The record gives the reactivity of an RNA of 177 nucleotides to 2A3. 2A3 adducts were read by reverse transcription with SuperScript II with manganese. Conditions: 150 mM KOAc, 10 mM MgCl2 and 150 mM bicine (pH 8.5), 24 C. As a SHAPE reagent, 2A3 marks flexible, mostly unpaired nucleotides at the ribose 2'-OH. It was measured as part of the RMDB library RFM100. The 2A3 profile rests on 655 reads. Values cover nucleotides 27 to 126. Reactivities are rounded to 0.1 and cut off at 0 and 3.
RNA sequence: GGGAACGACUCGAGUAGAGUCGAAAAAGCAGUGAGGAUACGUCCUCACUGCAAUCUCUUCCUGGUUCUUCCCGAAGUCAGGAAAAGCUGGGUUGAGAGGAAGAGCGCCAGUUACGACUGGCGCUCACGUUUCUGGCGAUUUCGAUCGCCAGAAACGAAAAGAAACAACAACAACAAC
Reactivity to 2A3 in 0.01 (KOAc 150mM, MgCl2 10mM, bicine 150mM(pH8.5), 24C), signal-to-noise 1, nucleotides 027 to 126: a010g000c000a000g000u000g000a020g000g000a000u050a080c220g080u000c000c000u020c000a000c030u000g010c000a000a000u000c000u010c010u000u020c000c000u000g030g000u000u010c030u010u030c000c000c060g200a300a020g210u120c060a090g030g000a010a000a000a000g040c030u020g000g000g000u040u030g000a000g010a020g070g060a120a090g000a000g000c000g000c000c000a010g010u050u060a070c300g000a000c110u000g000g000c000g000c000u000c000a000